This 177-nucleotide RNA was probed chemically with DMS and 2A3.
[RMDB]
RNA sequence: GGGAACGACUCGAGUAGAGUCGAAAACAGCGGCCACAACAUGAACCCUGUCUUCAUAUACAUGGUGCCGAAGCCCUGCCCCCGCGUGCGUAUCGUGCUCCCCGGUUUGUGCGCUCGGCCGGUACGCCGAGCAUACUGGAUUCGUCCAGUAUGCUCGAAAAGAAACAACAACAACAAC
Reactivity to DMS in 0.01 (KOAc 150mM, MgCl2 10mM, bicine 150mM(pH8.5), 24C), signal-to-noise 9, nucleotides 027 to 126: c100a080g010c070g020g010c020c040a070c080a080a100c140a090u000g000a080a090c060c050c040u000g010u000c090u000u010c090a060u010a100u010a090c110a060u010g010g010u000g010c040c040g010a100a130g000c030c010c010u000g000c020c000c010c010c030g020c140g010u000g010c020g010u000a020u000c010g010u010g010c020u000c040c020c030c040g010g010u000u000u010g020u000g010c050g010c050u000c080g010g010c010c000g010g010u000a020c020g020c030
Reactivity to 2A3 in 0.01 (KOAc 150mM, MgCl2 10mM, bicine 150mM(pH8.5), 24C), signal-to-noise 9, nucleotides 027 to 126: c030a010g060c040g020g010c040c020a050c030a110a060c020a090u090g050a050a050c010c020c060u050g050u080c040u120u070c060a050u120a010u040a160c060a070u110g060g000u080g070c050c020g050a040a020g030c010c000c010u050g040c020c000c000c010c000g050c010g020u040g000c010g010u020a020u050c010g030u110g030c010u070c020c000c000c000g010g030u060u100u100g080u030g010c040g000c030u030c030g010g000c010c000g000g010u010a010c010g010c010
2A3 adducts were read by reverse transcription with SuperScript II with manganese.